This 177-nucleotide RNA was probed chemically with 2A3 and DMS.
The DMS profile rests on 3,036 reads.
The data come from the RNA Mapping Database (RMDB), library OK2TRN.
Values cover nucleotides 27 to 126.
DMS adducts were read by reverse transcription with MarathonRT.

RNA sequence: GGGAACGACUCGAGUAGAGUCGAAAACGGGAGGUCGAGGCUUCAGGGAGCCAUGAUCAUACCAUUGCACUCCAGCCUGGGCAACAGAGUGAGACCCUGUCUCGGAAAAAACAAAAAAACAGUAAUGUCUAGUAGGAGAUUUCGAUCUCCUACUAGAAAAAGAAACAACAACAACAAC
Reactivity to 2A3 in 0.01 (KOAc 150mM, MgCl2 10mM, bicine 150mM(pH8.5), 24C), signal-to-noise 2, nucleotides 027 to 126: c040g010g030g000a040g010g000u020c040g030a010g000g000c000u070u050c080a040g080g110g000a000g020c040c000a030u040g010a020u050c040a020u100a140c000c010a020u000u080g050c000a020c030u000c000c020a030g060c010c010u050g000g000g000c010a080a020c020a050g080a030g100u110g050a060g030a080c070c000c040u060g040u060c040u020c000g080g000a060a070a000a020a040a040c170a040a110a020a010a000a010a000c060a020g070u170a140a080u150g000
Reactivity to DMS in 0.01 (KOAc 150mM, MgCl2 10mM, bicine 150mM(pH8.5), 24C), signal-to-noise 3, nucleotides 027 to 126: c130g010g000g010a070g000g020u000c050g010a080g020g000c020u010u000c100a100g000g010g010a120g020c050c050a080u000g000a030u000c040a060u000a220c030c000a080u010u000g010c080a090c040u000c010c030a090g000c010c010u000g000g000g030c040a070a060c070a050g000a070g020u000g000a080g000a090c020c050c040u000g000u000c010u000c030g020g020a000a020a040a060a030a060c090a030a020a050a020a040a050a070c100a050g010u000a060a100u000g010